Source: RMDB library OK3TST, as collected in RNAgym. The record gives the reactivity of an RNA of 207 nucleotides to DMS and 2A3. 2A3 adducts were read by reverse transcription with SuperScript II with manganese. The 2A3 profile rests on 1,965 reads. For DMS, 2,619 sequencing reads were counted.

RNA sequence: GGGAACGACUCGAGUAGAGUCGAAAAGUACAACUUGUGUUUCUGUGGAGUGCUACCAUCUACAAAAUUUGCAUAGACUUUGAAUAUGUAGAACAGUGGAAUGAAUAGAAAUACAUGUAUAUAUUUCUCAAAUGUCCAGACCACUUUAUAGAAAAGAGCAUAUGUUACCAUUCGUGGUAACAUAUGCAAAAGAAACAACAACAACAAC
Reactivity to DMS in 0.01 (KOAc 150mM, MgCl2 10mM, bicine 150mM(pH8.5), 24C), signal-to-noise 2, nucleotides 027 to 156: g010u010a080c030a020a100c030u010u000g030u000g000u000u000u010c020u010g030u000g020g000a120g000u000g000c020u000a070c040c040a140u000c020u020a090c030a070a030a050a130u010u000u000g000c060a130u000a080g010a140c110u010u000u010g010a160a130u000a100u010g040u000a030g030a050a080c070a060g020u030g000g010a050a210u010g000a240a070u020a060g000a020a040a010u000a010c010a030u000g010u000a100u000a040u010a010u010u000u010c020u000c070a040a070a140u010g000u010c040c000a000g020a220c060c010a050c030u000u000u010a050u010a090g000a060a060a060a070g030a230
Reactivity to 2A3 in 0.01 (KOAc 150mM, MgCl2 10mM, bicine 150mM(pH8.5), 24C), signal-to-noise 4, nucleotides 027 to 156: g060u070a040c010a080a020c060u070u060g010u000g010u030u030u000c020u030g040u030g050g050a050g010u040g020c000u010a050c020c030a050u030c030u000a040c020a070a270a060a090u030u100u060g030c020a070u040a090g020a120c030u080u030u080g000a030a020u060a050u100g020u040a020g030a150a050c030a090g050u010g000g050a070a110u110g000a050a050u080a100g000a010a000a000u020a010c030a040u100g020u020a040u020a000u000a000u070u060u000c010u000c010a060a120a050u130g020u010c020c020a040g030a060c020c000a030c000u070u150u100a150u120a070g110a060a060a010a010g110a020